This 207-nucleotide RNA was probed chemically with 2A3 and DMS. For 2A3, 4,516 sequencing reads were counted. For DMS, 5,373 sequencing reads were counted.
RNA sequence: GGGAACGACUCGAGUAGAGUCGAAAAGCUAUAUGUUUUCAUGCUAUUUUGGACUGUUCUGGUUUACUAAUAAGGUGCUUGGCACGACUUUUGGUAAGUAUCCUUAUAAAGUAAGUGCUGGACAAUUCAAAUAUAUGAUGCUUAACGGUAUGAGAGGACACUCAUUAGGUUUCGACCUAAUGAGUGUAAAAGAAACAACAACAACAAC
Reactivity to 2A3 in 0.01 (KOAc 150mM, MgCl2 10mM, bicine 150mM(pH8.5), 24C), signal-to-noise 6, nucleotides 027 to 156: g030c030u070a050u040a060u300g050u070u120u070u040c030a020u070g060c020u060a060u080u050u030u020g000g000a010c010u010g040u130u020c000u010g030g030u040u000u000a010c010u020a030a030u020a010a010g010g000u000g010c000u020u030g090g070c040a030c070g240a260c100u150u240u130u090g140g120u060a000a010g000u010a070u140c000c000u010u000a020u010a050a100a000g000u000a010a010g020u070g130c010u020g010g000a010c000a000a000u010u000c000a000a020a000u080a000u020a020u080g050a010u050g010c070u080u070a090a030c060g060g010u090a070u150g060a060g000a030g130g000
Reactivity to DMS in 0.01 (KOAc 150mM, MgCl2 10mM, bicine 150mM(pH8.5), 24C), signal-to-noise 2, nucleotides 027 to 156: g010c040u010a110u000a080u000g020u010u010u000u000c010a050u000g010c090u010a080u000u000u010u000g010g000a040c010u000g030u000u010c000u010g000g000u000u000u000a020c030u000a200a050u000a030a030g010g040u000g010c000u000u000g020g000c000a080c210g010a140c160u020u010u000u000g010g010u000a010a030g040u000a010u000c020c010u000u010a030u000a050a100a170g000u000a020a030g010u010g060c010u000g010g000a030c020a000a030u000u000c010a010a060a070u000a050u000a050u000g030a070u010g010c060u000u000a060a080c070g000g020u000a060u000g030a130g010a180g000g020